[RMDB]
RNA sequence: GGGAACGACUCGAGUAGAGUCGAAAAGUGCGCCGGUGUGAUCGCCGACGCAGGCAGCACUAAUCGCAACGUCGGUGACAAGGUCGCUUGUCUGCUGGCGGGCGGCGGGUACGCCGAGUAUGUGGCGGUGCCAGAGGGCCAGCUCAUGCCGAUUCCAACCAGUCCCAUUAUUCGUAAUGGGACUGGUAAAAGAAACAACAACAACAAC
Reactivity to 2A3 in 0.01 (KOAc 150mM, MgCl2 10mM, bicine 150mM(pH8.5), 24C), signal-to-noise 3, nucleotides 027 to 156: g070u040g010c020g010c030c010g050g020u090g050u120g050a160u160c050g000c040c000g030a020c020g000c010a000g060g000c040a030g040c020a020c050u110a090a070u120c060g020c040a090a180c060g090u060c020g010g030u060g020a030c020a040a040g100g050u140c060g000c190u020u010g000u030c040u070g090c050u040g030g000c000g010g030g000c000g010g000c000g040g020g000u110a040c010g000c010c020g030a050g070u180a160u170g110u100g020g000c020g000g040u060g010c010c000a070g050a090g070g070g020c030c000a050g010c010u010c000a020u030g020c040c010g030a050u040u030c030c000a020
Reactivity to DMS in 0.01 (KOAc 150mM, MgCl2 10mM, bicine 150mM(pH8.5), 24C), signal-to-noise 1, nucleotides 027 to 156: g000u000g000c000g010c040c000g040g030u010g000u000g020a110u000c120g030c000c010g020a010c020g020c010a040g040g040c040a100g030c030a140c040u000a060a120u000c050g000c030a060a140c060g040u000c030g020g040u010g020a080c030a020a020g030g000u000c240g000c020u010u000g010u000c030u000g100c090u000g040g020c000g010g000g030c010g040g010c100g010g010g020u000a080c000g040c000c000g020a120g040u020a110u010g010u010g010g020c060g000g020u010g000c000c010a120g010a160g020g000g020c000c010a100g020c020u000c030a030u000g000c110c010g000a250u000u000c000c000a300